[RMDB]
RNA sequence: GGGAACGACUCGAGUAGAGUCGAAAAGGGCCUUCCUUCUUCGGUGAUCCUUCCUCUCCCUGUCGGUGAAGUCUCCCGCACGAGUCCUCUUCCUAGGUCCGGAGUCGAUCUCCAUCUGAUCCGUCCGCAGUAUUUACAUGUUCGCAUGUAAAUACUGAAAAGAAACAACAACAACAAC
Reactivity to 2A3 in 0.01 (KOAc 150mM, MgCl2 10mM, bicine 150mM(pH8.5), 24C), signal-to-noise 3, nucleotides 027 to 126: g020g010g010c010c000u060u050c040c000u050u070c020u080u070c050g090g020u050g050a090u040c020c000u030u010c020c010u020c010u020c000c000c020u050g080u080c040g000g030u060g060a070a010g030u020c020u010c020c020c010g040c010a030c030g020a020g020u020c010c000u000c000u030u000c010c000u010a040g020g020u020c030c020g030g000a020g020u030c020g020a030u000c010u000c030c000a040u010c040u030g030a030u000c020c000g050u010c010c020g030
Reactivity to DMS in 0.01 (KOAc 150mM, MgCl2 10mM, bicine 150mM(pH8.5), 24C), signal-to-noise 5, nucleotides 027 to 126: g010g010g010c050c030u000u000c020c020u000u000c060u000u010c090g010g010u000g000a100u010c030c020u010u010c030c020u000c040u000c030c000c020u000g010u000c070g020g010u010g000a090a120g010u000c030u000c010c020c030g020c090a120c050g000a100g000u000c010c000u000c030u000u000c010c030u000a080g010g010u010c050c040g000g000a070g010u000c050g010a070u000c020u000c020c060a100u010c090u000g010a080u000c030c030g000u010c040c080g010